[RMDB]
RNA sequence: GGGAACGACUCGAGUAGAGUCGAAAAGCUGGAGGACUAAGAAGGCUGAGUCUGGUGAAGCAAGACUCUGCUGAUACAAUCCUCCUAGAGAACAGGGUGGGCGAGAGCAGCCCUCACUGGAGGACACCACCCAAAGGUGGUUCGCCACCUUUGGGUGAAAAGAAACAACAACAACAAC
Reactivity to 2A3 in 0.01 (KOAc 150mM, MgCl2 10mM, bicine 150mM(pH8.5), 24C), signal-to-noise 1, nucleotides 027 to 126: g070c060u030g030g000a010g000g000a000c010u040a130a010g040a050a000g140g000c000u010g000a000g000u000c010u020g000g160u200g230a150a050g070c090a050a030g000a010c000u000c040u040g030c010u000g000a010u030a110c060a030a030u000c000c010u000c000c000u010a050g040a000g000a080a020c020a010g050g000g000u030g000g010g000c010g000a100g040a060g130c140a040g030c010c020c020u000c010a000c010u020g000g060a060g010g030a020c000a080c020
Reactivity to DMS in 0.01 (KOAc 150mM, MgCl2 10mM, bicine 150mM(pH8.5), 24C), signal-to-noise 2, nucleotides 027 to 126: g020c110u000g000g010a000g000g000a000c140u010a130a090g000a270a300g010g010c000u000g000a050g000u000c020u000g000g000u000g000a180a140g020c120a090a050g000a000c000u000c020u000g020c020u000g000a080u030a120c130a050a260u000c020c000u030c000c020u000a030g000a250g000a110a100c040a000g000g000g020u000g010g030g020c000g000a080g000a200g020c230a260g010c020c030c000u000c030a010c000u000g000g000a140g020g050a200c110a070c110